[RMDB]
RNA sequence: GGGAACGACUCGAGUAGAGUCGAAAAUCUUGAUUCGUCAAGAGGGAAUCCUAAGUCGAAGACGAAUUUAGCUUGUCAGCUGACCAUCGGAAACGAUGGUUUAGCUUGGAUUUAGCUAAACUAUCUUCGAUAUGGAGUGGGCCCCGUUCGCGGGGAAACCUCCUCUUAUAUUCGUAUAAGAGGAGGUAAAAGAAACAACAACAACAAC
Reactivity to DMS in 0.01 (KOAc 150mM, MgCl2 10mM, bicine 150mM(pH8.5), 24C), signal-to-noise 3, nucleotides 027 to 156: u000c030u000u000g000a060u000u010c290g020u000c010a030a040g010a080g000g000g010a150a110u000c020c010u000a080a300g000u000c010g010a050a020g010a030c020g020a060a050u000u000u000a010g010c040u000u000g010u000c020a070g020c010u000g010a020c010c000a010u000c010g030g010a190a100a300c020g020a020u000g010g000u000u000u000a000g010c010u000u010g030g010a050u010u000u000a030g050c010u010a000a010a010c040u000a080u000c000u000u000c000g010a020u000a230u000g000g000a100g010u010g010g000g030c020c000c010c000g000u000u010c210g020c040g020g010g040g000a010a040
Reactivity to 2A3 in 0.01 (KOAc 150mM, MgCl2 10mM, bicine 150mM(pH8.5), 24C), signal-to-noise 4, nucleotides 027 to 156: u010c000u000u020g010a020u050u130c230g020u010c090a020a000g010a050g020g060g060a050a080u010c010c000u050a140a020g010u010c000g000a000a010g010a020c120g210a300a300u000u000u000a000g000c010u000u010g000u020c020a000g000c000u000g000a000c000c000a000u000c010g030g010a060a090a050c000g000a000u010g000g080u010u040u090a000g000c010u020u100g110g000a030u220u230u140a000g000c000u010a000a000a000c020u010a010u030c000u010u000c000g000a000u010a030u050g020g010a070g040u200g010g040g050c000c010c010c000g040u060u090c260g000c020g010g010g010g000a060a020